[RMDB]
RNA sequence: GGGAACGACUCGAGUAGAGUCGAAAACUGUUCUCAACUUUCUCCUGGAGAUAGGCAGCCUCACAAGAAGCCCAAGGAUAUCUGCCUGCUCUGACUCCCACUCUGAGAUGGCUGCCCUCCCUUUUCCACUCAGAAAAUAGUUCGCUAUUUUCUGAGUAAAAGAAACAACAACAACAAC
Reactivity to 2A3 in 0.01 (KOAc 150mM, MgCl2 10mM, bicine 150mM(pH8.5), 24C), signal-to-noise 3, nucleotides 027 to 126: c030u040g040u080u040c040u030c030a050a110c050u060u120u040c080u040c030c050u050g040g010a040g020a100u120a130g050g000c000a000g000c010c010u030c010a050c030a080a040g070a060a030g020c010c020c010a030a040g090g010a050u030a060u100c030u080g030c010c010u000g020c020u020c030u030g050a060c030u020c020c020c010a040c000u040c030u040g060a060g020a070u100g030g000c010u000g030c030c000c000u020c000c000c010u030u110u030u020c020c030
Reactivity to DMS in 0.01 (KOAc 150mM, MgCl2 10mM, bicine 150mM(pH8.5), 24C), signal-to-noise 5, nucleotides 027 to 126: c100u000g010u000u000c010u000c010a130a140c110u000u010u010c060u000c030c080u000g010g010a040g000a130u010a070g010g000c020a020g020c040c020u010c040a080c120a100a100g020a090a130g000c020c010c030a060a110g010g010a110u000a040u000c050u000g000c010c010u010g000c040u010c030u000g000a100c070u000c010c020c020a110c120u000c040u000g010a100g000a060u010g020g010c010u000g000c010c010c010u000c010c020c060u000u000u000u010c060c100